The record gives the reactivity of an RNA of 177 nucleotides to DMS. DMS adducts were read by reverse transcription with MarathonRT. Source: RMDB library OK2TRN, as collected in RNAgym. Reactivities are given for positions 27 through 126.
[RMDB]
RNA sequence: GGGAACGACUCGAGUAGAGUCGAAAAGUCGGAAACCAUUAUUUAUGAAGUGACUAGCAAUCAUGGAUUAAAUUAGAUGGUAUUCUAGUUUAGAGGUGAUUCGGCGCUGCGGUGCGACUGAAACUUCUGAGUUACGCUAGUUCGCUAGCGUAACUCAAAAAGAAACAACAACAACAAC
Reactivity to DMS in 0.01 (KOAc 150mM, MgCl2 10mM, bicine 150mM(pH8.5), 24C), signal-to-noise 2, nucleotides 027 to 126: g020u010c090g020g020a030a030a090c000c000a000u010u000a070u000u010u000a010u010g000a300a170g000u010g010a010c010u010a160g020c210a190a300u000c000a020u010g000g000a210u000u000a000a000a000u000u000a050g010a020u010g010g020u010a050u000u010c010u000a100g030u000u000u040a040g000a110g010g000u000g020a270u000u000c010g020g000c000g000c020u000g040c090g060g000u000g010c000g000a070c150u000g000a040a050a040c010u000u000c100
Conditions: 150 mM KOAc, 10 mM MgCl2 and 150 mM bicine (pH 8.5), 24 C. The DMS profile rests on 894 reads.